[RMDB]
RNA sequence: GGGAACGACUCGAGUAGAGUCGAAAAAACAUUAAAAAUCGUAAAAGAUUUAUUUGGAAGUUCAAUAGUUGGAGUAUAUCUAUUUGGUUCAGCAGUAAAUGGUGGUUUACGCAUUAACAGCGAUGUACUCAUUAGGUGGAUUCGUCCACCUAAUGAGAAAAGAAACAACAACAACAAC
Reactivity to 2A3 in 0.01 (KOAc 150mM, MgCl2 10mM, bicine 150mM(pH8.5), 24C), signal-to-noise 2, nucleotides 027 to 126: a000a000c100a070u170u120a180a190a060a040a000u060c010g000u030a020a100a170a130g020a050u000u010u010a110u020u050u030g040g010a000a050g060u140u200c030a060a050u040a120g040u060u050g060g030a070g110u140a030u000a000u050c050u010a120u190u030u140g060g000u080u010c020a040g000c000a010g040u070a000a070a100u020g210g030u030g020g000u010u000u070a010c020g050c040a040u000u180a050a140c000a040g130c030g070a010u040g020u000a020
Reactivity to DMS in 0.01 (KOAc 150mM, MgCl2 10mM, bicine 150mM(pH8.5), 24C), signal-to-noise 2, nucleotides 027 to 126: a010a040c050a050u020u020a020a040a030a010a010u000c000g020u000a110a040a100a140g000a020u000u010u000a030u010u010u000g020g020a070a080g010u000u010c030a060a030u010a090g010u000u020g020g030a130g010u000a030u000a030u000c050u010a110u030u030u030g010g020u000u010c050a060g020c040a050g010u010a030a010a040u030g000g040u010g000g000u030u000u000a020c100g010c050a060u010u020a040a060c120a080g030c030g000a070u000g000u010a140